[RMDB]
RNA sequence: GGGAACGACUCGAGUAGAGUCGAAAACGCUUCUCUCGGCCCAGCGUACCUCAUCUCCAUGCGUAGGACGGAGAACACCACGGAGCCCUUCGGGUAGUAGUGGCUAAUGAGCACCUUGUAAGCCUCCGCUACUUUCCUCGUUCGCGAGGAAAGUAGCAAAAGAAACAACAACAACAAC
Reactivity to 2A3 in 0.01 (KOAc 150mM, MgCl2 10mM, bicine 150mM(pH8.5), 24C), signal-to-noise 2, nucleotides 027 to 126: c080g010c040u060u010c070u000c050u040c030g040g010c010c000c000a010g000c050g010u070a100c040c020u060c000a060u060c010u000c050c050a110u250g070c100g100u050a090g010g130a060c020g020g020a040g030a000a060c030a000c020c000a040c010g130g230a050g000c030c020c000u150u220c080g030g010g000u060a020g100u000a000g020u080g030g000c030u090a110a050u040g030a020g000c000a040c000c030u040u090g040u100a040a010g000c000c000u030c060c010
Reactivity to DMS in 0.01 (KOAc 150mM, MgCl2 10mM, bicine 150mM(pH8.5), 24C), signal-to-noise 1, nucleotides 027 to 126: c100g000c070u000u000c090u000c040u000c040g020g010c020c040c050a110g030c050g000u000a110c120c020u010c070a050u000c010u000c000c000a110u000g010c040g000u010a070g020g000a080c140g020g060a110g000a040a080c170a080c070c050a030c070g000g000a270g020c030c020c050u010u010c130g010g010g020u010a070g010u000a070g020u000g000g030c050u020a130a080u010g000a080g010c010a080c010c030u000u010g020u000a080a230g000c050c020u030c110c090
This 177-nucleotide RNA was probed chemically with 2A3 and DMS. It was measured as part of the RMDB library OK2TRN. The 2A3 profile rests on 1,467 reads. For 2A3 the reverse transcriptase was SuperScript II with manganese. The DMS profile rests on 947 reads.